[RMDB]
RNA sequence: GGGAACGACUCGAGUAGAGUCGAAAAGAUAUGGAUGAUUGGGAGUAUGGCUUCGGAAACGAAGCCAAUACGAAGAACAAUAUCCUAAGUCGUGGUCCAUAGUCGCUGUUCGCAGCGACUAUGGAAAGUAUCUAUCACGGUUCGCCGUGAUAGAUACAAAAGAAACAACAACAACAAC
Reactivity to DMS in 0.01 (KOAc 150mM, MgCl2 10mM, bicine 150mM(pH8.5), 24C), signal-to-noise 3, nucleotides 027 to 126: g000a020u000a100u000g000g000a010u000g000a050u000u000g000g020g000a020g020u000a020u000g000g000c000u010u000c000g020g010a020a010a050c000g020a000a000g010c000c000a010a020u010a000c000g010a130a120g000a090a230c060a010a000u000a150u000c000c000u000a010a120g000u000c000g000u010g010g010u000c000c010a010u000a000g020u000c010g020c000u000g000u000u010c220g000c000a000g020c000g000a000c000u000a000u000g000g000a000a000a070
Reactivity to 2A3 in 0.01 (KOAc 150mM, MgCl2 10mM, bicine 150mM(pH8.5), 24C), signal-to-noise 2, nucleotides 027 to 126: g010a000u030a010u040g020g010a020u240g050a020u240u010g020g010g010a010g000u010a020u020g010g000c000u010u000c010g000g000a010a000a020c000g000a000a000g000c000c000a000a000u010a010c000g100a200a030g020a010a000c010a000a000u020a010u010c000c000u010a040a000g000u020c050g080u150g150g110u030c000c000a000u000a000g020u000c010g000c000u030g080u080u080c300g000c150a000g000c010g000a000c000u010a010u000g000g000a000a000a000
Record summary: Structure probing data (DMS and 2A3) for a 177-nucleotide construct. Values are in units of 0.01, from 0 to 300, in steps of 10. As a SHAPE reagent, 2A3 marks flexible, mostly unpaired nucleotides at the ribose 2'-OH. The RNA was probed in 150 mM KOAc, 10 mM MgCl2 and 150 mM bicine (pH 8.5) at 24 C. The DMS profile rests on 5,422 reads.